[RMDB]
RNA sequence: GGGAACGACUCGAGUAGAGUCGAAAAGACCCAGUACUGGGGCGCAACCAUGAAAUCAGUACGAUGGUGGAUAUUCUACUGCGUCGUCGACAAAACAACCCGUUGCUCACCGGUGAAGCUGGCGUGGCUGGAGAGAAACAUUCGUGUUUCUCUCCAGAAAAGAAACAACAACAACAAC
Reactivity to 2A3 in 0.01 (KOAc 150mM, MgCl2 10mM, bicine 150mM(pH8.5), 24C), signal-to-noise 2, nucleotides 027 to 126: g040a020c000c000c000a000g000u040a000c020u000g020g000g020g000c030g010c020a010a060c020c020a040u120g050a050a090a030u120c070a000g050u070a010c000g020a060u090g050g110u030g030g030a060u000a170u300u000c060u060a100c030u040g080c020g030u000c000g020u000c020g010a050c090a020a140a030a010c010a020a030c000c020c010g000u030u040g000c030u010c030a070c010c000g050g020u080g040a080a000g030c020u010g020g040c040g040u060g070g000
Reactivity to DMS in 0.01 (KOAc 150mM, MgCl2 10mM, bicine 150mM(pH8.5), 24C), signal-to-noise 5, nucleotides 027 to 126: g000a150c090c000c020a090g020u000a040c050u000g010g010g010g040c210g000c080a050a110c040c080a090u010g010a090a130a080u000c060a060g040u010a020c020g010a070u010g010g020u000g000g010a090u000a120u020u010c060u000a030c020u000g030c210g010u000c020g020u000c050g000a100c140a060a080a100a110c110a060a110c090c070c100g020u000u000g000c010u000c040a100c030c020g000g010u000g000a080a070g010c020u000g010g010c100g010u000g010g000